Description: This 207-nucleotide RNA was probed chemically with DMS and 2A3. The reactions ran in a buffer of 150 mM KOAc, 10 mM MgCl2 and 150 mM bicine (pH 8.5), at 24 C. For 2A3, 2,710 sequencing reads were counted. Values cover nucleotides 27 to 156.

[RMDB]
RNA sequence: GGGAACGACUCGAGUAGAGUCGAAAAGUCUAUGUUCGCAUAGACAAAAAAGCGUACUACCCUCUUUUGACGGACGAUGAAAUACGCAUCCCAAAUAGGAUUCCCGUAUGGAGUCCGAUAAGAGGGUAUCGCAAAAACCCACCUUUCGAGGUGGGAAACUUAUCUCAGUAUUCGUACUGAGAUAAGUAAAAGAAACAACAACAACAAC
Reactivity to DMS in 0.01 (KOAc 150mM, MgCl2 10mM, bicine 150mM(pH8.5), 24C), signal-to-noise 3, nucleotides 027 to 156: g020u000c010u000a010u000g000u010u000c260g090c020a030u000a010g000a010c010a000a050a100a070a090a140g010c010g000u000a080c110u000a030c010c000c010u000c020u000u000u000u000g010a230c120g010g030a020c000g010a140u000g020a200a110a070u000a050c050g030c090a050u000c020c000c000a060a160a180u010a050g010g000a060u000u000c100c090c090g040u000a060u000g000g000a190g020u000c000c010g020a080u000a030a120g020a040g010g010g040u000a010u000c000g000c000a050a050a070a060a140c000c000c010a010c000c000u000u000u010c250g020a030g020g010u000g010g040g000a000a010
Reactivity to 2A3 in 0.01 (KOAc 150mM, MgCl2 10mM, bicine 150mM(pH8.5), 24C), signal-to-noise 3, nucleotides 027 to 156: g010u000c000u000a010u010g040u020u120c180g010c070a000u020a000g000a010c000a000a220a010a050a000a010g020c040g050u060a070c020u010a000c030c020c000u000c020u040u100u000u160g230a100c030g000g000a010c030g230a300u020g020a020a050a000u020a010c010g010c010a010u020c010c020c000a110a300a160u220a100g020g000a010u020u030c040c020c000g000u010a000u010g010g010a020g000u000c000c000g000a040u020a020a000g010a000g000g090g000u010a010u030c000g000c000a030a030a020a020a060c010c000c010a030c020c010u080u080u070c290g090a030g010g000u000g000g000g000a020a010